Chemical mapping of a 207-nucleotide RNA with DMS and 2A3. Conditions: 150 mM KOAc, 10 mM MgCl2 and 150 mM bicine (pH 8.5), 24 C. The 2A3 profile rests on 930 reads. For 2A3 the reverse transcriptase was SuperScript II with manganese. Values are in units of 0.01, from 0 to 300, in steps of 10.
RNA sequence: GGGAACGACUCGAGUAGAGUCGAAAAGUCCUCAAGUCCAACAAGGGCAAGCCCCUGUAUGAGAUCAGCUCGACCCGAAACCCGUUCAUGGUUUGCAAGGACGCCUUCAAGCCCGCCUUUCUGCUGAGCCGCUGCCACACGCUGAAGCAGCGCAUAGCCACAUCCAGAGAUUCGUCUCUGGAUGUGGAAAAGAAACAACAACAACAAC
Reactivity to DMS in 0.01 (KOAc 150mM, MgCl2 10mM, bicine 150mM(pH8.5), 24C), signal-to-noise 1, nucleotides 027 to 156: g000u010c020c000u010c010a060a060g010u010c040c030a090a090c050a080a050g030g000g100c050a220a110g040c040c010c010c080u000g000u000a050u010g000a140g010a110u000c070a080g020c030u000c050g060a070c050c000c020g030a070a120a070c040c010c000g040u000u050c090a220u030g000g010u000u070u000g000c060a080a110g000g000a030c090g030c010c000u040u010c080a070a130g040c030c010c080g020c080c010u000u010u030c060u000g070c000u000g010a120g040c070c020g000c000u000g020c000c030a060c090a030c110g000c050u000g010a260a180g020c000a040g070c000g040c050a070u000a150g040
Reactivity to 2A3 in 0.01 (KOAc 150mM, MgCl2 10mM, bicine 150mM(pH8.5), 24C), signal-to-noise 2, nucleotides 027 to 156: g020u020c000c010u010c040a060a010g040u000c020c010a040a020c040a110a200g030g020g000c120a110a100g020c060c020c000c000u040g040u080a210u090g090a160g000a150u050c000a020g020c040u060c040g110a120c010c000c000g040a030a060a060c020c020c000g040u080u080c020a040u030g020g000u050u050u040g060c020a000a020g050g000a120c050g050c010c010u090u060c030a050a030g000c000c000c000g030c020c050u030u110u050c030u020g010c050u070g020a040g060c030c030g000c010u000g000c030c010a060c010a010c130g090c100u020g030a090a000g000c010a000g000c010g020c000a010u050a030g010